An RNA of 177 nucleotides, treated with 2A3 and DMS and read out base by base. Source: RMDB library M2PK50, as collected in RNAgym. Conditions: 150 mM KOAc, 10 mM MgCl2 and 150 mM bicine (pH 8.5), 24 C. DMS adducts were read by reverse transcription with MarathonRT. For DMS, 1,158 sequencing reads were counted.
RNA sequence: GGGAACGACUCGAGUAGAGUCGAAAAGAUCGUCUCUUCGGAGACGAUCAAAUAAAUCACAGGAAACGGCCAAAUGAGAAAAUCUCACCUGUGAAAAGGCCGAAACCCUCUGCUUCGGCAGAGGGAACUUGUUAAUUUCGUUCGCGAAAUUAACAAGAAAAGAAACAACAACAACAAC
Reactivity to 2A3 in 0.01 (KOAc 150mM, MgCl2 10mM, bicine 150mM(pH8.5), 24C), signal-to-noise 1, nucleotides 027 to 126: g000a010u000c000g040u010c010u010c050u030u080c190g090g010a000g010a000c000g000a000u000c000a010a000a000u010a020a010a010u110c000a000c010a010g000g110a140a190a050c010g040g000c000c010a030a020a170u090g010a010g050a060a300a110a170u100c020u000c010a050c000c010u040g000u020g020a080a040a000a020g010g020c020c020g010a090a040a080c010c010c000u020c000u000g030c000u030u050c200g100g000c010a000g010a000g010g000g000a010a010
Reactivity to DMS in 0.01 (KOAc 150mM, MgCl2 10mM, bicine 150mM(pH8.5), 24C), signal-to-noise 1, nucleotides 027 to 126: g000a000u000c000g000u000c000u000c000u010u020c260g050g000a010g000a000c000g010a010u000c000a000a090a070u000a050a110a100u020c030a030c010a000g000g000a140a140a100c070g000g050c000c010a040a060a120u000g000a020g000a150a060a080a100u000c020u020c010a180c060c010u000g000u010g000a070a080a050a070g010g020c020c010g020a130a120a070c010c000c020u000c000u000g020c000u000u010c130g020g010c000a040g000a000g000g000g000a020a030